RNA sequence: GGGAACGACUCGAGUAGAGUCGAAAAGCAACGCAAAGCCGCGGCAAGUGGAGUUAGCGAGAAGAGACUAGGCUUUGGUUUCUUCAAGUGAACCGGUCACCAAUCAGGUGUGGUAGUUACCGUAAAAAUAACCGCUCUUUGUUCGCAAAGAGCGGAACAUCUCUCUUUGGUUCGCCAAAGAGAGAUGAAAAGAAACAACAACAACAAC
Reactivity to DMS in 0.01 (KOAc 150mM, MgCl2 10mM, bicine 150mM(pH8.5), 24C), signal-to-noise 1, nucleotides 027 to 156: g000c020a040a040c000g000c010a070a100a080g010c140c050g030c070g000g010c080a040a070g020u010g000g030a100g040u010u000a160g000c060g020a300g000a020a090g020a090g000a040c010u000a080g080g050c090u010u000u000g000g010u000u010u010c000u040u010c050a040a300g000u010g000a070a090c050c030g000g020u010c010a050c030c030a060a090u000c090a090g010g060u000g050u000g010g050u010a050g000u000u000a050c030c000g000u020a010a090a090a010a130u000a060a160c010c010g000c000u000c000u000u010u020g000u000u000c210g000c000a000a030a020g000a010g030c000g010g010a010a050
Reactivity to 2A3 in 0.01 (KOAc 150mM, MgCl2 10mM, bicine 150mM(pH8.5), 24C), signal-to-noise 3, nucleotides 027 to 156: g030c020a010a100c030g000c070a040a100a020g020c030c020g040c060g040g000c090a120a040g020u060g080g040a090g030u120u090a020g060c060g040a040g000a070a010g000a000g000a020c020u050a030g080g140c030u100u110u110g020g000u000u010u000c000u030u010c040a080a050g030u040g050a020a030c040c000g000g020u070c010a010c050c010a030a110u210c070a060g020g080u060g020u060g080g030u010a060g050u080u070a030c030c010g040u100a020a010a020a110a040u150a060a050c010c000g000c000u010c000u010u000u010g030u060u090c160g000c110a000a010a000g000a000g000c010g000g000a000a010
Structure probing data (DMS and 2A3) for a 207-nucleotide construct.
The RNA was probed in 150 mM KOAc, 10 mM MgCl2 and 150 mM bicine (pH 8.5) at 24 C.
Reactivities are rounded to 0.1 and cut off at 0 and 3.
The 2A3 profile rests on 2,548 reads.
As a SHAPE reagent, 2A3 marks flexible, mostly unpaired nucleotides at the ribose 2'-OH.